Source information
An RNA of 177 nucleotides, treated with 2A3 and DMS and read out base by base.

[RMDB]
RNA sequence: GGGAACGACUCGAGUAGAGUCGAAAACUUCGUGAAAAUGCGUCGAUGGAUCAGGUCUAUCGAGAUCCAACCGAAAUAUCGUUACUAGGAGAGGAAUAAAUCAAGAUAGGCAGGCUAUCAUAGAAAGAAGCGGUUUGUUAUUCGUAGCAAGCCGCUUAAAAGAAACAACAACAACAAC
Reactivity to 2A3 in 0.01 (KOAc 150mM, MgCl2 10mM, bicine 150mM(pH8.5), 24C), signal-to-noise 5, nucleotides 027 to 126: c010u060u050c010g060u040g100a090a020a010a050u160g020c030g030u010c030g020a010u010g030g010a050u030c020a020g020g020u010c000u000a000u000c010g000a000g000a000u000c000c000a010a030c010c010g060a000a020a010u150a020u060c080g040u050u100a050c040u030a010g030g040a070g020a020g020g010a050a040u090a020a080a010u050c020a000a020g000a000u000a010g000g020c000a000g020g000c000u000a000u020c010a030u020a030g110a020a110a000g060
Reactivity to DMS in 0.01 (KOAc 150mM, MgCl2 10mM, bicine 150mM(pH8.5), 24C), signal-to-noise 9, nucleotides 027 to 126: c050u000u020c070g030u020g010a060a060a090a060u020g010c080g010u000c060g010a030u000g000g000a020u000c000a010g000g000u000c000u000a000u000c000g000a020g000a000u000c010c020a150a270c020c010g010a080a170a140u010a040u030c170g010u020u010a040c060u000a240g000g000a060g010a280g000g000a080a060u020a060a100a040u010c030a030a200g000a010u000a020g000g010c030a060g010g000c030u000a040u010c020a070u010a090g000a070a090a070g000
Annotation
For 2A3 the reverse transcriptase was SuperScript II with manganese. The data come from the RNA Mapping Database (RMDB), library OK1LIB. DMS adducts were read by reverse transcription with MarathonRT. Conditions: 150 mM KOAc, 10 mM MgCl2 and 150 mM bicine (pH 8.5), 24 C.